An RNA of 177 nucleotides, treated with 2A3 and DMS and read out base by base. Source: RMDB library M2PK50, as collected in RNAgym. Values cover nucleotides 27 to 126. For DMS the reverse transcriptase was MarathonRT.
RNA sequence: GGGAACGACUCGAGUAGAGUCGAAAAAGAGUUCGCUUCGGCGAACUCUACAACGGGAAAACGGCGUCCCGGAAAGAUAAGGCGGAUUCCGUCCAAGCGCCGAGAGUGGUGCGUUCGCGCACCACAAAUGACUCAUUAACUUCGGUUAAUGAGUCAUAAAAGAAACAACAACAACAAC
Reactivity to 2A3 in 0.01 (KOAc 150mM, MgCl2 10mM, bicine 150mM(pH8.5), 24C), signal-to-noise 2, nucleotides 027 to 126: a000g000a000g000u010u000c010g010c030u060u060c170g040g020c000g000a000a000c000u000c000u000a030c000a020a040c010g030g000g020a050a110a020a060c000g010g010c000g000u000c030c000c000g000g050a130a100a000g120a080u190a100a090g000g000c080g040g120a300u300u100c070c000g000u030c040c000a060a010g060c010g000c020c040g010a010g020a010g000u000g000g000u000g000c010g010u010u030c200g020c000g000c120a000c000c020a010c000a010a020
Reactivity to DMS in 0.01 (KOAc 150mM, MgCl2 10mM, bicine 150mM(pH8.5), 24C), signal-to-noise 2, nucleotides 027 to 126: a030g010a020g000u000u000c000g000c000u000u020c180g040g030c000g000a000a000c010u000c000u000a020c150a100a110c010g020g000g000a010a070a110a110c000g000g000c000g000u000c000c000c020g000g000a060a070a300g000a080u000a060a060g010g010c010g020g000a250u020u010c000c020g030u000c000c110a130a080g020c020g030c000c000g020a170g010a200g020u000g020g020u000g010c000g010u000u010c110g010c000g000c000a020c000c000a010c010a010a070

High 2A3 reactivity points to a flexible backbone, as in loops and unpaired stretches.